This 177-nucleotide RNA was probed chemically with DMS and 2A3. For DMS, 822 sequencing reads were counted. Source: RMDB library M2PK50, as collected in RNAgym. The RNA was probed in 150 mM KOAc, 10 mM MgCl2 and 150 mM bicine (pH 8.5) at 24 C.
RNA sequence: GGGAACGACUCGAGUAGAGUCGAAAACCACCGCAAUUCGUUGCGGUGGGAAGGUGCAAUUCGCUGUCUCCACCACAGACGGCCAAUCCGUCAAAGCGAAAACUGGAGGGUCAUUCGUGACCCUCAAGGUAAGUCGGUGUUUCGACACCGACUUACCAAAAGAAACAACAACAACAAC
Reactivity to DMS in 0.01 (KOAc 150mM, MgCl2 10mM, bicine 150mM(pH8.5), 24C), signal-to-noise 1, nucleotides 027 to 126: c000c000a000c000c000g030c000a010a000u000u000c210g000u000u020g000c010g020g010u000g000g010g010a040a020g000g020u000g010c150a030a150u010u020c000g030c020u000g000u000c060u000c010c040a150c030c060a120c190a050g000a020c000g020g060c220c190a070a130u020c030c000g000u010c030a050a060a080g010c020g000a000a000a030a030c150u010g030g000a030g000g020g000u000c000a060u000u000c150g020u000g000a020c000c000c010u020c000a020a040
Reactivity to 2A3 in 0.01 (KOAc 150mM, MgCl2 10mM, bicine 150mM(pH8.5), 24C), signal-to-noise 1, nucleotides 027 to 126: c010c000a040c000c000g020c010a000a030u100u040c240g100u120u020g000c030g010g000u010g000g000g010a040a110g000g010u030g030c010a070a160u030u080c040g050c010u010g050u080c060u050c010c000a060c010c020a040c000a060g020a000c010g000g020c000c020a030a070u130c000c020g000u040c020a050a040a000g040c040g020a020a010a010a030c090u090g030g010a000g000g000g020u000c000a010u050u080c190g060u020g000a000c030c000c010u000c000a000a000